[RMDB]
RNA sequence: GGGAACGACUCGAGUAGAGUCGAAAAGAGUUGCAGUUGAUUGAAACUAAAUCAUGUGCGCUAAGUUGUCCCGAAAGUAUCUUUGGAUUUCUACAAAACAGUGUUCCUUCUUUAGGAUGCUGAUCCGCAGAAUUUACUUCUUCGGAAGUAAAUUCUGAAAAGAAACAACAACAACAAC
Reactivity to 2A3 in 0.01 (KOAc 150mM, MgCl2 10mM, bicine 150mM(pH8.5), 24C), signal-to-noise 9, nucleotides 027 to 126: g080a010g010u160u300g000c020a070g040u030u020g020a010u010u030g080a130a110a100c150u150a100a110a020u010c010a010u060g070u020g180c000g000c010u010a050a060g220u210u110g050u050c000c000c000g020a010a040a000g090u130a100u090c070u050u100u110g040g010a070u020u140u030c070u120a110c060a040a110a100a010c000a020g010u000g170u100u110c010c000u040u160c040u100u190u150a010g000g000a010u020g000c010u040g010a050u020c010c000g000
Reactivity to DMS in 0.01 (KOAc 150mM, MgCl2 10mM, bicine 150mM(pH8.5), 24C), signal-to-noise 5, nucleotides 027 to 126: g000a040g010u010u030g070c010a030g020u000u000g020a010u000u000g000a160a170a220c240u030a060a040a020u000c010a020u000g000u000g000c000g000c010u010a030a050g000u020u020g010u000c000c010c000g000a080a080a130g000u000a020u010c030u000u010u030g000g010a040u000u010u030c100u000a090c240a070a070a120a270c050a010g010u000g010u010u000c010c000u000u010c300u020u010u020a020g010g010a010u000g000c010u010g000a020u020c040c030g040